[RMDB]
Conditions: 150 mM KOAc, 10 mM MgCl2 and 150 mM bicine (pH 8.5), 24 C. Chemical mapping of a 177-nucleotide RNA with DMS and 2A3. For DMS the reverse transcriptase was MarathonRT. It was measured as part of the RMDB library OK1LIB. Values are in units of 0.01, from 0 to 300, in steps of 10.
RNA sequence: GGGAACGACUCGAGUAGAGUCGAAAACAGUGAUGGAAACAUCACUGAAAAACGUGUGAGCGCAACACGAAAAAGUCGAUCGAAUACCGAUCGACAAGCGCUAAAGUCAUGCCGAAAGGCAUGACAACGAGCGAGGAUUAUUCGUAAUCCUCGCUCGAAAAGAAACAACAACAACAAC
Reactivity to DMS in 0.01 (KOAc 150mM, MgCl2 10mM, bicine 150mM(pH8.5), 24C), signal-to-noise 2, nucleotides 027 to 126: c000a000g000u000g000a000u000g010g010a230a150a170c000a000u000c000a020c000u000g000a000a040a030a190a140c010g000u000g000u010g030a000g020c010g000c000a300a010c010a000c000g000a010a020a020a000a020g030u000c010g000a010u000c000g040a300a060u020a110c210c000g020a040u000c000g000a020c000a040a090g000c000g030c000u000a140a110a070g000u000c000a000u000g000c000c000g010a090a100a130g000g000c000a000u000g000a010c000a040a000
Reactivity to 2A3 in 0.01 (KOAc 150mM, MgCl2 10mM, bicine 150mM(pH8.5), 24C), signal-to-noise 3, nucleotides 027 to 126: c010a010g000u000g000a000u010g000g010a040a020a010c000a000u000c000a000c000u000g000a050a000a000a010a010c000g000u010g000u020g040a020g000c000g000c000a020a000c010a000c120g280a040a010a000a000a000g000u000c000g000a000u000c000g010a020a060u130a300c140c000g010a010u000c000g000a000c000a000a000g000c000g000c000u000a070a000a000g000u000c000a000u000g010c010c000g000a080a000a010g000g000c000a000u000g000a000c000a000a020
About this RNA
Reactivities are given for positions 27 through 126.